[RMDB]
RNA sequence: GGGAACGACUCGAGUAGAGUCGAAAAGAUAUGGAUAUGGACAUGCUGCAUCGUCGGAAACGACGACCUCGGGCAGCAACAGCCAUGAUCCUAAGUCAAAACUUUGGUCAGUUCGCUGACCAAAGAAGUACCAUCAGAGGUUCGCCUCUGAUGGUACAAAAGAAACAACAACAACAAC
Reactivity to 2A3 in 0.01 (KOAc 150mM, MgCl2 10mM, bicine 150mM(pH8.5), 24C), signal-to-noise 2, nucleotides 027 to 126: g030a020u070a040u190g010g000a010u030a020u040g000g020a060c120a180u100g020c020u020g010c000a050u000c030g010u010c020g040g000a100a070a040c020g000a000c000g040a030c010c090u150c160g180g240g020c020a010g000c000a020a050c030a030g060c010c000a000u080g170a020u010c000c000u040a130a040g050u050c040a020a010a110a160c000u020u000u020g020g000u000c000a000g040u050u100c190g020c110u040g010a030c000c020a000a000a020g000a010a020
Reactivity to DMS in 0.01 (KOAc 150mM, MgCl2 10mM, bicine 150mM(pH8.5), 24C), signal-to-noise 2, nucleotides 027 to 126: g030a020u010a300u000g000g010a000u010a000u010g000g040a040c050a300u000g000c000u000g000c010a250u000c000g000u000c000g000g000a070a080a200c000g000a000c010g000a000c300c120u000c140g000g000g000c020a020g020c000a010a070c280a180g000c000c000a000u000g000a070u000c000c010u010a010a180g010u000c040a070a160a050a130c000u000u000u000g000g000u000c000a000g030u000u030c300g020c000u000g020a030c020c000a000a000a010g010a060a120
Chemical mapping of a 177-nucleotide RNA with 2A3 and DMS. 2A3 is a SHAPE reagent: it acylates the 2'-hydroxyl of flexible nucleotides of all four kinds. Source: RMDB library TTRDEL, as collected in RNAgym. The RNA was probed in 150 mM KOAc, 10 mM MgCl2 and 150 mM bicine (pH 8.5) at 24 C. For 2A3, 3,163 sequencing reads were counted.